[RMDB]
RNA sequence: GGGAACGACUCGAGUAGAGUCGAAAAUCAAGAAUUCUGGUGAAUCAUUAACAGUUGAUGAUUGUGUUAAGAACUGGGAGUCAUUUUGUGGGAUUCAAUUUGAUUGCUUUAUGGAGUUAAAAUUAGAUAACUCCUAUCGAUUCGUCGAUAGGAGUUAAAAAGAAACAACAACAACAAC
Reactivity to DMS in 0.01 (KOAc 150mM, MgCl2 10mM, bicine 150mM(pH8.5), 24C), signal-to-noise 2, nucleotides 027 to 126: u000c050a070a110g000a090a040u000u000c020u000g000g020u000g010a040a030u000c060a060u010u000a050a130c070a080g000u010u010g000a100u010g000a110u010u010g010u010g000u020u010a110a140g030a040a030c050u010g000g000g000a060g010u000c070a010u000u000u000u010g010u010g010g000g000a090u000u000c030a100a090u000u000u000g010a030u000u000g000c050u000u000u000a070u020g010g010a080g010u000u000a030a070a050a100u000u010a060g010a220